[RMDB]
RNA sequence: GGGAACGACUCGAGUAGAGUCGAAAAGAUAUGGAACAAUCGUGAACUACGCGUUGUCAUCGGAAACGAUGACGAUGCGCACGAGUUGUUCCUAAGUCAAACACCGAACACUUCGGUGUUCGGUGAACAAUUACGACUGCUUCGGCAGUCGUAAUUGAAAAGAAACAACAACAACAAC
Reactivity to DMS in 0.01 (KOAc 150mM, MgCl2 10mM, bicine 150mM(pH8.5), 24C), signal-to-noise 2, nucleotides 027 to 126: g000a050u000a300u000g000g010a030a000c010a080a070u000c000g000u010g000a160a140c210u010a300c020g030c020g040u030u000g010u010c000a000u000c000g010g000a150a080a150c020g000a000u000g000a010c010g030a000u000g000c010g000c000a010c000g010a050g030u000u000g000u000u010c000c000u000a000a110g010u020c050a130a130a280c010a020c010c000g000a020a010c020a010c030u000u020c170g020g010u000g000u000u000c010g000g010u000g000a020a090
Reactivity to 2A3 in 0.01 (KOAc 150mM, MgCl2 10mM, bicine 150mM(pH8.5), 24C), signal-to-noise 1, nucleotides 027 to 126: g030a000u090a060u160g000g010a000a000c000a000a020u000c020g020u020g000a110a150c170u270a110c300g010c000g000u000u050g000u000c010a000u000c000g010g040a100a080a050c000g000a000u010g010a000c000g000a000u000g000c040g000c000a000c000g070a060g140u030u010g000u010u000c010c000u010a120a000g040u020c050a090a070a080c000a010c000c030g000a000a000c030a000c000u080u230c300g120g010u000g000u000u000c020g020g000u000g010a000a000

About this RNA:
The record gives the reactivity of an RNA of 177 nucleotides to DMS and 2A3. Reactivities are given for positions 27 through 126. Source: RMDB library TTRDES, as collected in RNAgym. The RNA was probed in 150 mM KOAc, 10 mM MgCl2 and 150 mM bicine (pH 8.5) at 24 C. As a SHAPE reagent, 2A3 marks flexible, mostly unpaired nucleotides at the ribose 2'-OH. DMS adducts were read by reverse transcription with MarathonRT.